[RMDB]
RNA sequence: GGGAACGACUCGAGUAGAGUCGAAAAGUGUAUAGGCAAACCGACCCUCCGCCUAUACACGAAUUAAGGAGGGAGGAGAUCUUAUGCUCGCGAUCUUACGUCACGAGCGAAGGCCUGCGGCUCGUGACGGAUCUUACGCAGGCCAUAGCGAGCUACAAAUACUGCUGAGUUUCGACUCAGCAGUAUUAAAAGAAACAACAACAACAAC
Reactivity to DMS in 0.01 (KOAc 150mM, MgCl2 10mM, bicine 150mM(pH8.5), 24C), signal-to-noise 2, nucleotides 027 to 156: g050u010g000u000a000u010a020g000g060c020a030a060a070c030c050g020a220c020c020c020u000c010c030g000c000c000u000a020u000a010c020a020c010g010a050a070u000u000a120a110g000g020a100g060g010g030a080g030g010a110g010a040u010c020u000u010a060u000g010c000u000c010g030c010g010a050u000c080u000u000a100c050g000u000c000a020c010g010a040g000c010g060a040a070g000g010c010c030u000g010c080g030g030c020u000c010g000u000g000a070c020g020g000a030u000c060u000u000a060c060g010c030a090g020g010c000c030a120u000a070g010c020g000a050g020c010u000a040c080a100
Reactivity to 2A3 in 0.01 (KOAc 150mM, MgCl2 10mM, bicine 150mM(pH8.5), 24C), signal-to-noise 2, nucleotides 027 to 156: g000u000g000u000a000u000a010g050g000c060a090a130a220c100c120g110a260c030c020c030u070c040c040g000c000c000u000a000u000a000c010a000c020g020a010a030u230u140a110a070g020g010a000g010g030g000a000g030g060a060g000a030u030c020u090u150a090u170g010c010u020c010g010c060g030a090u030c020u100u180a060c000g000u000c000a000c000g000a000g000c060g020a050a030g010g010c000c000u000g000c000g030g010c000u000c020g030u000g000a000c000g010g010a040u040c030u060u110a020c040g000c010a000g000g000c020c010a010u000a000g010c000g020a000g000c000u100a070c050a070
Structure probing data (DMS and 2A3) for a 207-nucleotide construct.
For 2A3, 1,504 sequencing reads were counted.
DMS adducts were read by reverse transcription with MarathonRT.
The RNA was probed in 150 mM KOAc, 10 mM MgCl2 and 150 mM bicine (pH 8.5) at 24 C.